Notes: Chemical mapping of a 207-nucleotide RNA with 2A3. Values cover nucleotides 27 to 156. It was measured as part of the RMDB library M2RFPK. For 2A3 the reverse transcriptase was SuperScript II with manganese.

[RMDB]
RNA sequence: GGGAACGACUCGAGUAGAGUCGAAAAGUCGGAACAUAACGACGGCGGGCCGGUGGGGAAUCAGGGGUCUACCGUGGGAUAGCGAUGAGACAGCCCCUCCGAUGGCACCAAGCGUCGGAUCGCGGAAAACACUGUAAGCCCUUCGGGGCUUACAGAACACAUUGAUUACCUUCGGGUAAUCAAUGUGAAAAGAAACAACAACAACAAC
Reactivity to 2A3 in 0.01 (KOAc 150mM, MgCl2 10mM, bicine 150mM(pH8.5), 24C), signal-to-noise 1, nucleotides 027 to 156: g040u020c020g000g040a160a060c030a210u210a160a020c030g040a000c000g020g020c000g000g020g000c060c010g020g090u170g030g000g000g000a030a080u100c080a100g040g010g000g030u000c090u100a130c030c080g020u070g070g050g000a130u090a060g000c000g070a070u070g000a040g030a050c030a010g000c000c030c000c000u020c000c000g030a050u000g080g000c030a020c120c000a070a040g100c000g000u010c020g020g000a010u070c030g020c000g020g060a030a030a030a030c090a010c000u000g010u000a000a000g000c010c000c000u020u030c130g000g000g030g010c000u000u000a000c000a000g000a000a000

The RNA was probed in 150 mM KOAc, 10 mM MgCl2 and 150 mM bicine (pH 8.5) at 24 C.